The data come from the RNA Mapping Database (RMDB), library OK1LIB. An RNA of 177 nucleotides, treated with 2A3 and read out base by base.
RNA sequence: GGGAACGACUCGAGUAGAGUCGAAAAGACUGCGUGCACUUGAGACGAUAUCGAGCCGGAAAUUAAUCGAUAAUGUCUCUAGUAGUGGAUACGAUCCGGCAAGUAUCGACUACAUGUGCUCGUAGGAAAUGGUGCCGAUGUUCGCAUCGGCACCAUUAAAAGAAACAACAACAACAAC
Reactivity to 2A3 in 0.01 (KOAc 150mM, MgCl2 10mM, bicine 150mM(pH8.5), 24C), signal-to-noise 1, nucleotides 027 to 126: g050a130c000u050g000c000g000u000g100c000a000c000u000u050g000a000g000a000c030g000a000u000a010u130c000g000a000g000c030c000g000g130a110a140a140u260u170a030a140u030c000g000a000u140a130a040u090g020u000c000u000c000u090a080g000u030a000g000u000g160g000a000u000a010c000g010a060u020c000c030g000g010c040a080a030g040u000a000u000c000g000a000c000u050a050c000a030u000g000u000g000c000u000c000g040u040a010g000g000a020
The 2A3 profile rests on 725 reads.